An RNA of 177 nucleotides, treated with 2A3 and DMS and read out base by base. DMS adducts were read by reverse transcription with MarathonRT. The reactions ran in a buffer of 150 mM KOAc, 10 mM MgCl2 and 150 mM bicine (pH 8.5), at 24 C. Source: RMDB library TTRINS, as collected in RNAgym.
RNA sequence: GGGAACGACUCGAGUAGAGUCGAAAAGAUAUGGAGCAGUAAGGCCUUGGAUUUACUUUGGGUCUGUGAUGCUAUCGGAAACGAUAGUGCAUGGCCCAAAGUUGUCAGGCUAUCUGCUCCUAAGUCAGGAUUAGGGUUAGUUCGCUAACCCUAAUCCAAAAGAAACAACAACAACAAC
Reactivity to 2A3 in 0.01 (KOAc 150mM, MgCl2 10mM, bicine 150mM(pH8.5), 24C), signal-to-noise 1, nucleotides 027 to 126: g060a000u100a010u230g000g000a000g060c040a000g060u280a300a300g160g030c040c050u080u300g190g010a040u090u300u300a020c010u000u010u000g030g000g000u010c060u100g060u050g030a300u110g030c000u010a000u000c010g010g050a100a070a070c010g010a000u010a000g010u040g000c000a010u020g010g030c000c000c000a000a000a000g000u000u010g010u000c010a010g000g000c070u000a000u010c010u000g000c000u030c000c000u000a000a010g020u040c040a020
Reactivity to DMS in 0.01 (KOAc 150mM, MgCl2 10mM, bicine 150mM(pH8.5), 24C), signal-to-noise 1, nucleotides 027 to 126: g010a090u000a300u000g000g000a000g030c000a030g020u010a090a300g010g020c000c000u000u010g010g000a020u010u020u010a020c010u010u000u000g000g000g010u020c000u010g040u000g010a150u000g000c010u000a010u000c010g020g020a090a100a280c010g020a030u000a020g010u000g000c020a000u000g010g000c000c000c000a000a000a010g000u000u000g010u000c000a100g000g000c010u000a280u000c000u000g010c000u000c010c000u010a010a080g000u000c010a210